[RMDB]
RNA sequence: GGGAACGACUCGAGUAGAGUCGAAAAUGGAAGAGGAGGCGCUGCUGGAGAAGCAGCCUCUGUCCGUGUCUACAGCAGCGGCGACGGUAGCACCACGCAUGAGUGACUCUCCGGGCCUUCAAGAGGCGCUGCAGGUGCCGUUCGCGGUACCUGCAGCAAAAGAAACAACAACAACAAC
Reactivity to DMS in 0.01 (KOAc 150mM, MgCl2 10mM, bicine 150mM(pH8.5), 24C), signal-to-noise 3, nucleotides 027 to 126: u020g010g000a060a040g000a090g000g000a040g000g010c040g010c070u010g010c000u020g010g020a110g000a120a030g020c020a130g010c000c010u020c010u000g000u000c030c020g020u020g010u010c020u000a050c060a050g030c040a040g000c040g000g010c020g010a100c060g000g010u000a050g000c080a220c020c010a080c100g010c100a100u020g000a090g040u000g000a080c020u010c020u010c020c030g000g000g030c000c020u010u010c130a080a090g000a040g000g000c090
Reactivity to 2A3 in 0.01 (KOAc 150mM, MgCl2 10mM, bicine 150mM(pH8.5), 24C), signal-to-noise 5, nucleotides 027 to 126: u120g040g010a050a010g060a070g120g000a010g020g040c100g010c150u050g010c000u020g050g080a220g010a110a010g030c020a010g010c010c010u020c010u000g050u000c010c010g060u040g030u000c020u040a090c010a040g020c010a010g030c000g050g000c000g020a040c020g080g020u080a010g020c030a050c040c010a040c050g090c050a120u100g030a010g140u120g090a140c000u030c000u000c040c010g040g040g000c010c010u040u090c090a110a030g030a020g150g060c040